Conditions: 150 mM KOAc, 10 mM MgCl2 and 150 mM bicine (pH 8.5), 24 C. An RNA of 177 nucleotides, treated with DMS and read out base by base. The data come from the RNA Mapping Database (RMDB), library OK2TST.
RNA sequence: GGGAACGACUCGAGUAGAGUCGAAAACUUCCCUGAGUGUUGGCUACCAAAAGCUCUGAGUGCACCCAGGGAGCUAAGUCCUCCUGCCCACAGGCAAUAAUGGACUGACACGGGGUAGACUUAAAGACUCGUUGUGAGGUUUCGACCUCACAACGAGAAAAGAAACAACAACAACAAC
Reactivity to DMS in 0.01 (KOAc 150mM, MgCl2 10mM, bicine 150mM(pH8.5), 24C), signal-to-noise 1, nucleotides 027 to 126: c290u000u000c000c000c000u010g010a120g040u000g010u000u000g010g020c010u000a060c060c170a070a030a110a150g000c000u000c120u010g010a110g040u000g000c040a040c040c000c010a040g010g010g010a010g010c090u000a020a030g000u000c000c000u010c120c010u000g000c020c040c150a300c260a140g000g000c040a050a060u030a070a060u010g000g010a030c030u000g000a060c150a100c080g000g000g030g050u000a060g000a110c070u040u000a030a070a220g040a240